RNA sequence: GGGAACGACUCGAGUAGAGUCGAAAACAGUUUUCCGAGCGUCGCCUCCUUAGGCGUGUCCUAGGAAAACAACAACUCGAUGUAGAGUUGAUUCCAAUUUCUGUGAAAGAAAUUGAUGCCCCGAUUAGGAGGCUAGGGCUUCUUAUUCGUAAGAAGCGAAUACACGUUAGUUCGCUAACGUGUAUUCAAAAGAAACAACAACAACAAC
Reactivity to DMS in 0.01 (KOAc 150mM, MgCl2 10mM, bicine 150mM(pH8.5), 24C), signal-to-noise 4, nucleotides 027 to 156: c070a130g000u000u000u000u000c000c000g020a070g010c040g000u000c030g010c000c000u000c170c170u000u000a050g030g000c020g020u000g000u010c150c030u000a150g050g000a030a020a020a030c020a130a210c010a030a020c000u010c000g000a200u010g020u000a170g000a040g020u000u010g000a150u010u000c030c010a030a030u000u000u000c010u000g020u000g000a200a180a050g000a020a030a030u000u010g000a170u000g020c000c000c020c020g000a260u010u000a100g010g000a060g020g020c020u010a060g020g020g010c010u000u000c000u000u000a070u000u000c260g020u000a030a030g000a040a020g030c010
Reactivity to 2A3 in 0.01 (KOAc 150mM, MgCl2 10mM, bicine 150mM(pH8.5), 24C), signal-to-noise 8, nucleotides 027 to 156: c040a030g000u010u000u000u000c010c010g030a050g030c030g130u170c030g010c010c010u090c030c050u180u300a030g030g000c020g030u050g040u080c010c040u060a050g010g000a010a010a000a000c010a000a010c000a000a000c000u030c030g160a210u270g180u300a080g000a000g000u000u010g030a120u120u020c030c000a000a010u000u010u000c020u020g070u070g230a300a110a060g000a000a020a010u020u040g040a060u160g030c000c000c020c000g070a120u080u130a050g010g020a020g020g010c050u070a050g050g100g010c000u000u000c000u000u030a050u050u060c150g050u040a020a000g010a020a000g010c000
The data come from the RNA Mapping Database (RMDB), library PSEUDOB. Chemical mapping of a 207-nucleotide RNA with DMS and 2A3. Reactivities are given for positions 27 through 156. The RNA was probed in 150 mM KOAc, 10 mM MgCl2 and 150 mM bicine (pH 8.5) at 24 C. DMS adducts were read by reverse transcription with MarathonRT.